[RMDB]
RNA sequence: GGGAACGACUCGAGUAGAGUCGAAAAUAAAAACCUGCGAGCGUGUCCCGGUGGGUUCUGGGAGCUCUAACUCCGCAGGAACUACAAACCUUGCUUACACAGAGUGAACCUGCUGCCUGGCGUGCUCAGCGGUACUAUGGUUCGCCAUAGUACCGCUAAAAGAAACAACAACAACAAC
Reactivity to 2A3 in 0.01 (KOAc 150mM, MgCl2 10mM, bicine 150mM(pH8.5), 24C), signal-to-noise 3, nucleotides 027 to 126: u210a000a160a030a010a010c070c010u090g000c120g020a000g000c020g020u030g090u300c000c030c000g000g030u060g000g060g000u110u080c050u100g010g000g010a010g050c000u000c010u060a040a050c010u020c060c030g080c000a010g000g100a090a000c040u210a080c090a080a040a050c020c060u090u220g000c000u160u120a030c090a020c010a030g050a030g010u060g120a120a090c010c010u040g070c020u010g000c020c010u000g010g000c010g000u030g000c000u000c040
Reactivity to DMS in 0.01 (KOAc 150mM, MgCl2 10mM, bicine 150mM(pH8.5), 24C), signal-to-noise 1, nucleotides 027 to 126: u220a050a170a130a090a120c000c000u000g130c010g040a230g000c010g000u000g000u210c030c010c030g000g080u000g000g000g010u050u050c040u000g000g000g060a180g000c000u000c040u030a060a160c070u000c190c140g000c040a060g010g000a000a050c060u090a110c300a170a030a000c130c000u060u000g140c000u000u010a090c300a100c200a000g000a030g000u000g020a000a170c000c000u000g000c100u040g000c060c070u000g000g000c000g000u000g030c070u000c010

The record gives the reactivity of an RNA of 177 nucleotides to 2A3 and DMS. Conditions: 150 mM KOAc, 10 mM MgCl2 and 150 mM bicine (pH 8.5), 24 C. Reactivities are given for positions 27 through 126. The data come from the RNA Mapping Database (RMDB), library OK1LIB.